[RMDB]
RNA sequence: GGGAACGACUCGAGUAGAGUCGAAAAGGGCGAUAGUUCGCUAUCGCCCAAAACUAAAACGUAUGUUAAGCUUGAUACGCAAAAACGAGCAAAAAGAAUAAGAAAUCAGCCGCUUCGGCGGCUGAAACAAUCUCACAUAGUUCGCUAUGUGAGAUUGAAAAGAAACAACAACAACAAC
Reactivity to 2A3 in 0.01 (KOAc 150mM, MgCl2 10mM, bicine 150mM(pH8.5), 24C), signal-to-noise 2, nucleotides 027 to 126: g020g000g030c000g010a000u010a000g020u020u060c120g000c110u010a000u010c000g000c000c000c000a000a000a000a060c010u030a010a000a010a040c030g050u040a010u090g080u130u120a140a030g030c000u010u010g010a000u050a070c090g010c260a080a080a000a020a060c010g000a000g000c070a000a090a110a050a030g140a070a130u180a170a040g070a080a120a040u030c000a010g000c010c000g090c060u020u050c210g140g020c060g000g000c000u010g000a000a000a010
Reactivity to DMS in 0.01 (KOAc 150mM, MgCl2 10mM, bicine 150mM(pH8.5), 24C), signal-to-noise 2, nucleotides 027 to 126: g000g000g010c000g020a000u000a000g030u000u010c180g070c000u000a000u000c000g030c010c000c000a010a030a040a130c080u010a070a060a050a300c050g000u000a010u010g020u000u010a150a150g010c020u010u000g000a060u000a000c030g000c140a060a030a050a010a040c040g000a040g040c040a030a070a060a120a090g020a090a130u010a060a050g010a050a090a120u000c000a010g020c000c010g030c010u000u010c200g030g000c000g030g010c000u010g000a010a040a130

This 177-nucleotide RNA was probed chemically with 2A3 and DMS. For 2A3, 1,437 sequencing reads were counted. The data come from the RNA Mapping Database (RMDB), library M2PK50.